[RMDB]
RNA sequence: GGGAACGACUCGAGUAGAGUCGAAAACACUGGUUGUGGAAGUUGGCAAUCCAGGAUUGCAGCCAACGCCAGAUAACAGAGCAUGCGAAAGGAUGGCGGAUGGGAAAGCAUGCCCAUCCGAAACGUACGAGGUGGCCCAUCCGAAACGUACGUACAGGGGCAAUCAUAAUUUCGAUUAUGAUUGCCCAAAAGAAACAACAACAACAAC
Reactivity to 2A3 in 0.01 (KOAc 150mM, MgCl2 10mM, bicine 150mM(pH8.5), 24C), signal-to-noise 2, nucleotides 027 to 156: c100a040c020u020g030g030u100u160g020u130g110g100a120a080g170u200u110g070g000c000a010a010u070c000c060a110g040g070a030u030u050g030c050a040g020c000c010a060a020c000g010c000c000a010g020a120u110a150a050c060a020g040a020g120c020a040u110g060c110g080a090a030a010g120g010a000u040g030g000c000g000g000a000u010g040g000g030a090a210a250g010c040a010u240g050c000c000c000a020u030c000c000g070a000a000a000c000g010u020a020c000g000a000g080g030u050g040g030c000c000c030a010u000c000c000g020a000a010a020c030g030u030a000c000g040u060a020c050a040g020
Reactivity to DMS in 0.01 (KOAc 150mM, MgCl2 10mM, bicine 150mM(pH8.5), 24C), signal-to-noise 1, nucleotides 027 to 156: c090a130c010u000g000g010u010u000g000u000g090g030a070a300g020u020u030g000g000c010a070a010u000c060c070a130g000g030a090u010u000g010c030a270g010c010c140a080a020c040g000c000c000a120g010a090u000a020a140c070a170g020a130g000c070a000u000g050c150g000a120a070a240g010g000a150u010g010g030c050g020g000a030u040g030g000g020a160a090a180g020c220a170u010g020c000c000c000a020u020c030c000g020a000a060a010c000g010u000a090c120g020a100g010g020u000g030g000c000c000c060a100u000c000c010g000a020a040a100c030g010u010a020c000g010u000a160c080a150g020
Description: An RNA of 207 nucleotides, treated with 2A3 and DMS and read out base by base. For DMS the reverse transcriptase was MarathonRT. The reactions ran in a buffer of 150 mM KOAc, 10 mM MgCl2 and 150 mM bicine (pH 8.5), at 24 C. The 2A3 profile rests on 817 reads. For DMS, 1,525 sequencing reads were counted.